About this RNA:
The record gives the reactivity of an RNA of 177 nucleotides to 2A3 and DMS. The RNA was probed in 150 mM KOAc, 10 mM MgCl2 and 150 mM bicine (pH 8.5) at 24 C.
RNA sequence: GGGAACGACUCGAGUAGAGUCGAAAAGUAGCAUUUAAUGUCUUUCAGGGCAUUGAAACGGCUGUUGGCCAUUAUGUUCAUGCUCGCCUGAAGGGUGGUCUUAUUUUAAAGUUUGACUCUGGCACCGCCUAUAUCAUUUGUUCGCAAAUGAUAUAGGAAAAGAAACAACAACAACAAC
Reactivity to 2A3 in 0.01 (KOAc 150mM, MgCl2 10mM, bicine 150mM(pH8.5), 24C), signal-to-noise 6, nucleotides 027 to 126: g060u060a000g000c020a020u030u060u140a050a030u080g010u000c020u020u250u090c060a050g060g020g000c010a010u010u070g020a040a030a010c060g040g000c020u060g120u170u130g070g000c010c020a030u120u120a100u230g070u030u060c020a020u030g000c020u010c040g030c010c010u030g080a040a030g040g020g010u040g030g000u010c030u050u060a140u060u140u030u120a090a150a030g010u030u040u050g020a010c000u010c040u070g030g000c020a010c010c020g010
Reactivity to DMS in 0.01 (KOAc 150mM, MgCl2 10mM, bicine 150mM(pH8.5), 24C), signal-to-noise 6, nucleotides 027 to 126: g020u000a050g020c030a090u000u000u000a040a040u000g000u000c010u000u010u020c210a110g010g000g000c000a020u000u010g010a040a050a100c170g000g020c020u000g010u000u000g010g010c000c020a100u010u010a060u010g000u010u010c100a050u000g010c030u010c090g000c040c030u000g010a070a050g010g010g020u000g010g010u000c020u000u000a050u000u000u010u020a040a110a150g010u000u000u000g000a040c030u010c090u000g020g010c050a080c050c080g010
Notes:
For DMS, 11,275 sequencing reads were counted. It was measured as part of the RMDB library 15KREP.